Chemical mapping of a 207-nucleotide RNA with 2A3 and DMS. The data come from the RNA Mapping Database (RMDB), library ARCHII. The 2A3 profile rests on 1,355 reads. The reactions ran in a buffer of 150 mM KOAc, 10 mM MgCl2 and 150 mM bicine (pH 8.5), at 24 C. For DMS the reverse transcriptase was MarathonRT.
RNA sequence: GGGAACGACUCGAGUAGAGUCGAAAAAACCAAUCGAGCUAGUCAAUUCGUGGCGUGUCUCUCCGCAGCGGGUUGGCGAAUGUAAAGAGUGACUAAGCAUGUAGUGCCAAGGAUGUAGUAAUUUUGGACGGGGGUUCAAAUCCCCCCAGCUCCACCACUAAUUUGUCAUGUUCGCAUGACAAAUUAGAAAAGAAACAACAACAACAAC
Reactivity to 2A3 in 0.01 (KOAc 150mM, MgCl2 10mM, bicine 150mM(pH8.5), 24C), signal-to-noise 2, nucleotides 027 to 156: a000a010c030c010a010a020u120c060g020a020g070c050u100a020g020u000c000a010a030u010u010c010g010u030g120g000c000g010u100g040u000c030u010c010u010c050c000g000c010a030g020c000g000g000g020u010u030g000g000c000g010a010a010u080g030u070a010a020a020g020a000g000u020g000a010c020u030a070a000g030c040a020u090g030u130a060g050u030g060c020c020a050a040g040g020a040u100g010u030a050g040u020a140a180u100u220u160u130g030g000a010c010g000g000g000g000g000u030u120c060a050a070a180u130c000c000c000c020c000c000a010g000c060u000c000c010a030c010c000a050
Reactivity to DMS in 0.01 (KOAc 150mM, MgCl2 10mM, bicine 150mM(pH8.5), 24C), signal-to-noise 1, nucleotides 027 to 156: a080a070c020c010a110a110u000c060g000a070g020c020u050a100g010u000c050a060a020u000u000c010g030u000g020g020c000g020u010g040u000c070u010c040u000c190c020g020c000a080g040c030g030g020g020u000u000g000g020c030g000a070a070u000g030u000a070a070a060g000a070g020u010g000a080c020u000a080a130g000c010a070u000g000u000a100g010u010g000c040c030a070a110g000g020a070u010g030u020a090g000u010a050a130u000u000u000u000g000g000a090c080g050g010g010g070g030u000u000c180a050a070a200u010c070c030c000c020c000c000a050g020c020u000c000c000a050c050c030a240